Structure probing data (2A3 and DMS) for a 177-nucleotide construct.
RNA sequence: GGGAACGACUCGAGUAGAGUCGAAAAUGUGGUCGCUGUCGGAGUGGGCGAGCGGACUACACCAGCAGGCGCGGAAGCAUUGGCGCGCAGCCUUUUUGACGAUGAUCUUGCGCAUACCGUGCUCGCCAACAAAUAGCUACUUCGGUAGCUAUUUGUUAAAAGAAACAACAACAACAAC
Reactivity to 2A3 in 0.01 (KOAc 150mM, MgCl2 10mM, bicine 150mM(pH8.5), 24C), signal-to-noise 5, nucleotides 027 to 126: u090g000u010g000g010u010c010g000c030u020g030u050c020g110g240a240g050u270g050g030g010c070g050a010g000c020g030g010a020c020u020a010c030a050c020c000a020g070c040a030g060g000c010g000c030g080g080a070a020g020c030a040u070u260g030g000c030g000c040g000c040a020g000c010c000u110u160u070u090u250g140a090c090g060a070u110g030a080u040c040u060u130g000c000g000c020a030u080a090c000c020g000u010g000c010u020c020g000c000c000
Reactivity to DMS in 0.01 (KOAc 150mM, MgCl2 10mM, bicine 150mM(pH8.5), 24C), signal-to-noise 7, nucleotides 027 to 126: u010g020u000g010g010u000c020g020c030u000g010u000c040g020g020a180g020u010g010g000g010c000g000a030g020c020g020g020a060c050u000a050c050a100c070c050a140g020c110a070g010g000c040g020c280g000g010a150a100g010c050a050u000u000g010g000c070g010c070g010c080a060g010c090c020u000u000u010u010u020g010a120c180g000a100u000g010a080u010c050u000u000g010c010g010c030a100u010a120c030c010g000u000g010c010u000c030g010c020c040

Conditions: 150 mM KOAc, 10 mM MgCl2 and 150 mM bicine (pH 8.5), 24 C. For 2A3, 8,548 sequencing reads were counted. For DMS the reverse transcriptase was MarathonRT.